[RMDB]
RNA sequence: GGGAACGACUCGAGUAGAGUCGAAAAAUUGCACUGUCGAACAAUAACGGCGAAAAUUUGCAUUAUUGAGGUGUGCGAGUGCACCAAAGAUUGCAGUAGGAAAUGAGCAACAAUUAGGAUCUCGCGACAGUCGCAGGUGAUUCGUCACCUGCGACUGAAAAGAAACAACAACAACAAC
Reactivity to 2A3 in 0.01 (KOAc 150mM, MgCl2 10mM, bicine 150mM(pH8.5), 24C), signal-to-noise 2, nucleotides 027 to 126: a000u110u140g000c020a050c000u060g050u090c030g050a150a050c000a000a080u140a080a030c080g040g000c030g220a200a000a300a000u000u040u030g000c000a000u000u000a110u000u170g040a000g000g000u030g000u000g010c000g000a000g000u050g010c000a010c000c000a050a050a060g000a050u000u080g000c090a040g080u180a140g000g160a000a030a030u140g000a090g080c000a000a060c010a020a020u100u030a000g060g000a050u000c050u050c000g100c100g060a040
Reactivity to DMS in 0.01 (KOAc 150mM, MgCl2 10mM, bicine 150mM(pH8.5), 24C), signal-to-noise 1, nucleotides 027 to 126: a130u000u000g030c000a090c090u020g000u000c040g000a270a110c010a200a050u020a100a090c150g090g000c000g000a130a120a090a110u000u130u050g000c010a120u010u000a070u000u010g000a300g040g000u000g030u010g000c110g000a000g000u000g070c000a000c080c060a010a030a030g000a050u000u000g040c000a040g010u000a060g000g110a000a110a030u000g050a230g000c050a050a080c120a080a120u000u000a020g000g000a080u000c000u000c020g000c000g000a090